[RMDB]
RNA sequence: GGGAACGACUCGAGUAGAGUCGAAAAUUACCUUGGAAUGAGGCAGACCAUCAUUGGGUUCGACAGUCUUUUGCAUGGUGAGGCGACUACUGUGGAUAAUUUCGAUGUACCCGUCUGGAGAAGCUAACAUACCUCUGGCAUUCGUGCCAGAGGUAUGAAAAGAAACAACAACAACAAC
Reactivity to 2A3 in 0.01 (KOAc 150mM, MgCl2 10mM, bicine 150mM(pH8.5), 24C), signal-to-noise 2, nucleotides 027 to 126: u080u070a080c010c000u020u050g100g020a140a090u120g040a140g080g000c000a010g010a040c020c000a030u120c040a040u060u150g090g050g000u040u030c050g020a030c030a020g070u030c010u010u110u060u060g110c040a040u050g000g050u090g060a080g000g050c050g040a010c000u020a000c030u030g000u060g210g030a070u070a160a070u170u090u110c060g020a010u110g010u030a060c010c020c020g060u000c030u040g030g000a080g000a060a000g030c040u060a030a030
Reactivity to DMS in 0.01 (KOAc 150mM, MgCl2 10mM, bicine 150mM(pH8.5), 24C), signal-to-noise 3, nucleotides 027 to 126: u010u010a110c000c000u010u000g000g020a120a100u000g010a060g000g000c050a060g010a100c050c040a040u020c050a060u000u000g010g020g000u010u000c060g020a070c130a090g010u000c010u000u010u000u000g020c060a080u010g000g050u000g000a080g000g000c050g020a100c070u000a040c040u000g020u010g010g010a080u000a070a080u000u010u000c100g000a090u000g010u000a070c030c040c060g000u000c050u000g000g010a100g020a100a080g020c060u000a040a170